About this RNA
This 177-nucleotide RNA was probed chemically with 2A3 and DMS.
[RMDB]
RNA sequence: GGGAACGACUCGAGUAGAGUCGAAAACUAGACUGGCUUCUGCAUGAGGCUGGCAUCCUCAAGGCCAUGCCCAUCACAGGCUGGGGCAGCGCCCGUCUGCCCCGAGCCCUCCAGCAACCUUGGAGUGGACAGUACGGACGUUCGCGUCCGUACUGUCAAAAGAAACAACAACAACAAC
Reactivity to 2A3 in 0.01 (KOAc 150mM, MgCl2 10mM, bicine 150mM(pH8.5), 24C), signal-to-noise 2, nucleotides 027 to 126: c020u040a070g110a070c040u010g030g010c020u050u030c020u160g080c070a150u140g020a020g070g020c020u020g040g000c000a050u110c050c040u150c060a050a140g070g000c000c050a070u160g000c030c010c000a030u060c050a050c040a050g020g000c010u040g000g000g050g030c010a000g000c020g090c050c020c010g040u050c000u010g000c000c000c000c000g010a000g000c000c010c000u020c010c000a040g040c040a160a200c010c060u010u050g040g020a070g070u140g110
Reactivity to DMS in 0.01 (KOAc 150mM, MgCl2 10mM, bicine 150mM(pH8.5), 24C), signal-to-noise 1, nucleotides 027 to 126: c080u010a060g000a180c080u000g000g040c060u000u000c060u010g020c110a100u000g010a050g030g010c010u000g000g030c000a090u000c100c050u000c180a050a120g000g020c010c040a000u020g000c030c000c020a110u000c060a100c150a100g000g010c000u000g020g050g000g030c020a010g040c090g010c080c080c050g030u000c010u010g000c000c000c020c010g000a040g000c020c010c040u000c020c030a070g020c110a080a090c260c090u000u020g040g000a010g010u020g000